[RMDB]
RNA sequence: GGGAACGACUCGAGUAGAGUCGAAAAAAAACGCUGGGACAUGGUGGUAAGGCUUUUGACGGAGUCAUCUGAAGCGCGCACGGAUGGUCUCCGAUAAGCCUUACGUAACAUCCAUGUCCUGUGCUGAAGCGCGCACGGCAACCGAAAGGUGCGAAAAGCUCGAGAGCGGGUUCGCCCGCUCUCGAGCAAAAGAAACAACAACAACAAC
Reactivity to 2A3 in 0.01 (KOAc 150mM, MgCl2 10mM, bicine 150mM(pH8.5), 24C), signal-to-noise 1, nucleotides 027 to 156: a000a000a000a000c080g010c000u010g000g020g010a000c000a000u000g000g010u010g020g030u020a020a000g030g000c020u030u110u180u200g220a160c050g000g000a000g020u030c000a000u000c000u040g030a210a060g000c010g000c000g020c000a030c020g000g020a010u010g030g070u090c000u000c000c020g000a020u020a070a000g000c000c000u000u000a000c000g010u000a000a000c050a030u040c000c000a000u000g000u020c010c000u000g000u050g000c000u050g010a070a040g000c000g020c000g000c000a000c000g070g020c020a090a090c040c000g080a080a010a000g030g000u020g010c050g020a060a040a000a000